[RMDB]
Structure probing data (2A3 and DMS) for a 207-nucleotide construct.
RNA sequence: GGGAACGACUCGAGUAGAGUCGAAAAGUUUACAGAAUUAAUCAAAAACUAUCUCAGACGGAAUUCAUGGCAGCUAAAGUUGCCCAAUUGAAUGCCCUCUACACUGACAUAAAAGUAAUGCAAGAAAGACUAUUGCGUCAACAAGCAGAGUUUAGAACAAUGUAUCCAACUUCGGUUGGAUACAUUGAAAAGAAACAACAACAACAAC
Reactivity to 2A3 in 0.01 (KOAc 150mM, MgCl2 10mM, bicine 150mM(pH8.5), 24C), signal-to-noise 4, nucleotides 027 to 156: g040u070u080u120a060c070a030g110a150a190u170u180a160a060u190c060a080a090a050a090a090c030u020a060u040c010u000c040a040g010a060c070g020g030a050a000u010u010c010a020u070g010g000c000a010g000c010u140a300a070a060g010u030u010g000c000c010c010a060a110u020u040g000a020a000u080g020c020c010c000u000c010u060a040c090a010c090u060g070a070c040a060u150a070a170a010a000g060u100a130a030u070g030c020a010a090g030a160a100a020g060a040c020u090a090u170u100g050c050g040u040c020a050a050c020a080a040g040c060a010g030a020g050u070u130u160a020g010a070a020
Reactivity to DMS in 0.01 (KOAc 150mM, MgCl2 10mM, bicine 150mM(pH8.5), 24C), signal-to-noise 1, nucleotides 027 to 156: g000u020u000u000a300c050a120g010a160a110u010u000a070a270u000c000a030a120a110a080a140c070u000a160u000c020u000c030a070g000a070c060g000g010a170a020u010u000c010a040u000g000g000c000a010g000c030u000a050a000a130g050u000u000g010c000c000c090a040a040u000u000g050a010a050u000g020c050c000c000u000c030u000a040c050a130c060u000g020a030c020a040u000a060a060a120a130g000u000a050a030u000g000c040a080a130g010a140a130a110g030a070c050u010a080u000u000g000c070g010u000c060a040a150c060a050a090g010c060a060g010a050g040u010u000u000a100g020a070a170

The data come from the RNA Mapping Database (RMDB), library OK3TST.